[RMDB]
RNA sequence: GGGAACGACUCGAGUAGAGUCGAAAAAAGUCACCCUCCUCGCAUCGCAAGUUCGUGCUUGCGACUUCCACGUAGGGCGAGGGGUGGGCGAAAGUUGCCAUGAGACCGUAACUUUCGUAGUCAUUGAAAAACUACAAAGCCUUCGGGCUUUGUAGAAGAUAAGGAGCACGUUCGCGUGCUCCUUAUCAAAAGAAACAACAACAACAAC
Reactivity to DMS in 0.01 (KOAc 150mM, MgCl2 10mM, bicine 150mM(pH8.5), 24C), signal-to-noise 1, nucleotides 027 to 156: a060a050g020u000c030a080c000c000c010u000c010c010u000c010g040c110a110u000c000g020c000a030a020g000u000u030c300g000u010g000c000u000u020g000c000g020a010c070u000u000c050c080a140c230g030u020a140g010g040g000c010g000a040g000g000g000g000u010g010g020g010c000g030a010a050a070g020u010u000g000c000c060a180u000g020a220g010a080c240c120g010u010a040a040c020u010u000u010c060g030u000a060g000u000c040a180u000u000g000a110a070a090a110a120c000u010a000c000a000a060a030g020c010c040u000u000c300g000g000g030c000u000u000u020g010u000a000g020a000a040
Reactivity to 2A3 in 0.01 (KOAc 150mM, MgCl2 10mM, bicine 150mM(pH8.5), 24C), signal-to-noise 4, nucleotides 027 to 156: a000a000g090u080c040a060c010c010c010u070c000c010u000c010g000c000a050u000c010g000c000a020a010g010u190u220c120g180u300g080c020u000u000g000c000g000a000c030u110u040c000c020a110c140g150u170a150g040g070g010c000g010a010g010g000g000g000u070g010g030g000c000g000a000a000a000g000u000u010g000c040c020a040u090g060a050g020a300c070c020g020u000a000a000c000u000u010u000c010g000u010a030g090u040c070a060u050u100g030a000a020a000a090a070c010u000a000c000a000a000a000g000c000c000u050u110c260g070g000g000c000u000u000u000g000u000a000g000a000a000